[RMDB]
RNA sequence: GGGAACGACUCGAGUAGAGUCGAAAAAUAGCUGUAACGUCCGCUAUCAAGGUAGCUGUAACUUCCGCUAUUAAGAUAGCAGUUACAGCUAUCUUGAUAGCGGAAGUUACAGCUAUCUUGAUAGCGGCCUUAGAUAUACCUUCGGGUAUAUCUAAGGAAAAGAAACAACAACAACAAC
Reactivity to DMS in 0.01 (KOAc 150mM, MgCl2 10mM, bicine 150mM(pH8.5), 24C), signal-to-noise 1, nucleotides 027 to 126: a130u010a090g020c080u010g010u000a060a090c180g000u000c000c010g000c000u000a000u000c000a010a020g000g000u000a000g020c000u000g000u000a000a010c020u010u000c030c030g020c000u000a000u000u000a010a020g010a020u000a010g010c000a070g010u010u000a110c300a140g000c000u000a000u010c000u000u000g010a000u000a000g000c000g000g000a010a000g000u000u010a000c010a000g000c000u000a010u000c000u000u010g000a020u000a020g020c030g000g010

This 177-nucleotide RNA was probed chemically with DMS. Source: RMDB library RFMREP, as collected in RNAgym. Values cover nucleotides 27 to 126.